The record gives the reactivity of an RNA of 177 nucleotides to 2A3 and DMS. DMS adducts were read by reverse transcription with MarathonRT. Reactivities are given for positions 27 through 126. For 2A3 the reverse transcriptase was SuperScript II with manganese. For 2A3, 3,145 sequencing reads were counted.

[RMDB]
RNA sequence: GGGAACGACUCGAGUAGAGUCGAAAAACGUCAUACGUGACGAUGACUGUUUGGAUGUUCUCGGACGUUCAAAGCUACAUCCAACAAAUUGGUAGCUUUGUACUCCGAUGCCAUUCAGAUAGUUAAAAUUGAUCCCCUCUUUCGAGAGGGGAUCAAUAAAAGAAACAACAACAACAAC
Reactivity to 2A3 in 0.01 (KOAc 150mM, MgCl2 10mM, bicine 150mM(pH8.5), 24C), signal-to-noise 4, nucleotides 027 to 126: a000c020g000u010c010a010u030a080c240g100u050g020a000c020g010a050u130g000a010c000u000g000u000u000u000g000g010a000u000g000u070u020c010u000c000g000g000a030c130g010u010u010c000a000a000a000g000c010u010a010c020a190u170c090c040a160a100c070a080a160a090u190u180g070g000u000a000g000c000u020u000u000g010u010a000c000u000c000c010g000a010u050g000c000c000a000u000u000c000a000g000a020u040a000g020u030u040a030a110a060
Reactivity to DMS in 0.01 (KOAc 150mM, MgCl2 10mM, bicine 150mM(pH8.5), 24C), signal-to-noise 2, nucleotides 027 to 126: a160c030g000u000c010a030u010a080c200g090u020g020a010c000g000a080u000g000a010c000u000g000u000u000u000g010g010a010u000g000u000u010c200u000c000g000g040a010c160g060u000u000c000a000a000a020g080c040u010a000c070a060u010c110c120a150a110c300a030a090a060u030u020g000g000u000a000g000c000u000u000u000g000u020a020c050u000c000c030g000a000u020g010c300c000a000u000u010c000a000g000a000u010a000g000u000u000a040a010a020